[RMDB]
RNA sequence: GGGAACGACUCGAGUAGAGUCGAAAAGAUAUGGAACUUGAUAUCAGACCCUAAGAGCGAUAAGCUACAGUCGGAAACGACUGUUAGCUUUUGACGCUCGAAGGGUCUGAUAUCAAGUUCCUAAGUCCAUAGUUACUUUGUUCGCAAAGUAACUAUGAAAAGAAACAACAACAACAAC
Reactivity to DMS in 0.01 (KOAc 150mM, MgCl2 10mM, bicine 150mM(pH8.5), 24C), signal-to-noise 3, nucleotides 027 to 126: g000a080u000a300u000g010g000a020a010c020u000u000g000a030u000a010u000c000a000g010a020c000c010c000u020a030a300g000a000g020c010g000a180u010a020a020g010c000u000a000c000a020g010u000c000g000g010a180a140a240c010g020a010c000u000g000u020u010a000g010c000u000u000u000u000g010a180c090g030c010u000c010g000a200a030g000g000g010u000c010u010g010a000u000a000u000c010a000a000g000u010u000c000c000u000a010a080g010u010c050

Chemical mapping of a 177-nucleotide RNA with DMS.
For DMS the reverse transcriptase was MarathonRT.
The data come from the RNA Mapping Database (RMDB), library TTRINS.
The reactions ran in a buffer of 150 mM KOAc, 10 mM MgCl2 and 150 mM bicine (pH 8.5), at 24 C.